[RMDB]
RNA sequence: GGGAACGACUCGAGUAGAGUCGAAAACCAGGUUGCCUAAGGAGGGGUGAACCGGCCCAGGUCGGAAACGGAGCAGGUCAAAACUCCCGUGCCGAUCAGUAGUGGGAUCGCGCCUGUGAAUAGCCACUGUACUCCAGCCUGGGCAAGAUAGUGAGACCUUAGAGUCCAGGUUCGCCUGGACUCUAAGAAAAGAAACAACAACAACAAC
Reactivity to 2A3 in 0.01 (KOAc 150mM, MgCl2 10mM, bicine 150mM(pH8.5), 24C), signal-to-noise 2, nucleotides 027 to 156: c010c000a010g000g010u000u020g000c000c030u170a120a170g100g000a050g080g020g030g020u060g150a020a010c000c000g010g000c010c000c000a000g070g000u150c070g070g000a130a100a000c090g000g000a050g060c090a040g010g020u070c020a000a000a060a300c100u060c000c000c020g040u070g030c010c000g050a130u020c030a000g090u130a040g040u070g070g080g010a070u050c000g000c010g000c060c040u020g020u020g100a130a110u120a130g000c000c020a020c030u080g090u030a080c060u000c010c000a020g000c000c000u000g000g000g030c020a000a010g010a020u170a030g070u060g040a030g100a080c000